RNA sequence: GGGAACGACUCGAGUAGAGUCGAAAAUGCUCUAUCCAUUCAGGGUAACUCUAUCAUGACUAGCGUGAAUAGUAACGUUCGGGUUAGAAAGCUCAUGAGACAAUGUGGAAGUCCGAGUAGCCUAAACGAUAUCCUAAAGGUUCGCCUUUAGGAUAUCAAAAGAAACAACAACAACAAC
Reactivity to 2A3 in 0.01 (KOAc 150mM, MgCl2 10mM, bicine 150mM(pH8.5), 24C), signal-to-noise 6, nucleotides 027 to 126: u040g010c010u000c000u020a030u000c020c020a050u100u140c060a050g040g000g040u060a060a060c020u000c020u060a070u070c020a040u030g050a060c030u020a010g030c090g300u030g030a020a040u080a090g160u100a080a050c030g010u010u010c010g060g030g020u000u010a030g060a060a080a010g040c000u000c020a020u020g000a000g010a050c050a080a090u110g010u020g070g030a050a040g040u020c040c010g010a000g000u020a030g040c000c010u030a070a030a010c080
Reactivity to DMS in 0.01 (KOAc 150mM, MgCl2 10mM, bicine 150mM(pH8.5), 24C), signal-to-noise 6, nucleotides 027 to 126: u010g010c020u000c030u000a100u000c020c020a090u000u010c150a080g010g020g010u010a070a100c090u010c040u010a110u010c030a040u000g010a110c050u000a040g010c030g000u010g000a030a040u000a100g010u010a090a070c170g000u000u000c030g010g010g010u000u010a030g010a080a090a100g010c230u000c030a030u000g010a070g000a080c150a060a080u000g020u010g010g010a100a080g000u000c070c070g010a070g010u000a100g010c020c020u000a040a060a090c200
An RNA of 177 nucleotides, treated with 2A3 and DMS and read out base by base. DMS adducts were read by reverse transcription with MarathonRT. The reactions ran in a buffer of 150 mM KOAc, 10 mM MgCl2 and 150 mM bicine (pH 8.5), at 24 C. For 2A3, 11,511 sequencing reads were counted.